[RMDB]
RNA sequence: GGGAACGACUCGAGUAGAGUCGAAAAAAAGAUCAAAGAAGAGCUUGUGUAUAUCAAGUGCCACCAGUGCGUGGAGCUGAAUGAUAAGCUGCAGGCAUGUCUGGGUUGCGGCAAAGCCAAGUACUGCAAUGACAGAUUCGUUCGCGAAUCUGUCAUUAAAAGAAACAACAACAACAAC
Reactivity to DMS in 0.01 (KOAc 150mM, MgCl2 10mM, bicine 150mM(pH8.5), 24C), signal-to-noise 1, nucleotides 027 to 126: a030a090a130g020a160u020c080a030a070a040g000a080a070g010a150g030c020u000u010g070u000g020u010a080u000a080u000c050a020a060g030u000g040c040c000a050c040c030a140g020u010g010c060g040u000g010g000a080g010c010u000g020a080a070u010g000a040u010a060a170g010c020u010g030c040a020g000g030c020a140u000g030u000c010u000g010g000g010u000u020g040c160g030g010c090a050a070a050g010c070c060a030a050g010u000a180c060u000g000c150